[RMDB]
RNA sequence: GGGAACGACUCGAGUAGAGUCGAAAAAGAACGAUGGCUACAAAUCCCUGGACGAAGGUCAGAAAGUAUCCUUCACCAUCGAAAGCGGCGCUAAAGGCCCGGCAGCUGGCAACGUAACUUCUCUGUAAUAAGGGUUAAUUUUCGAAUUAACCCUUAUAAAAGAAACAACAACAACAAC
Reactivity to 2A3 in 0.01 (KOAc 150mM, MgCl2 10mM, bicine 150mM(pH8.5), 24C), signal-to-noise 3, nucleotides 027 to 126: a000g100a070a000c040g020a020u020g010g000c020u120a010c120a060a130a040u060c000c000c000u010g060g010a020c070g010a030a000g020g000u040c050a010g250a050a100a000g080u090a090u100c000c000u000u010c010a010c010c000a040u030c020g000a040a010a040g080c020g000g000c000g000c060u070a140a120a100g040g000c000c000c000g020g000c000a000g000c010u050g020g010c020a040a000c060g040u040a010a010c010u050u050c030u030c010u020g000u010a070
Reactivity to DMS in 0.01 (KOAc 150mM, MgCl2 10mM, bicine 150mM(pH8.5), 24C), signal-to-noise 8, nucleotides 027 to 126: a090g010a120a130c060g010a030u010g000g000c060u000a080c130a080a110a110u010c010c010c020u000g010g010a120c120g000a040a020g000g010u010c090a120g010a090a090a100g010u010a060u010c010c010u000u000c010a220c020c020a020u000c040g000a060a110a100g010c050g000g010c080g010c040u020a050a090a110g010g000c030c040c030g010g000c030a040g000c020u000g010g020c040a040a060c050g000u030a050a060c100u000u010c030u010c020u010g010u010a100
The record gives the reactivity of an RNA of 177 nucleotides to 2A3 and DMS. It was measured as part of the RMDB libraries RFM100 and RFMREP. The reactions ran in a buffer of 150 mM KOAc, 10 mM MgCl2 and 150 mM bicine (pH 8.5), at 24 C.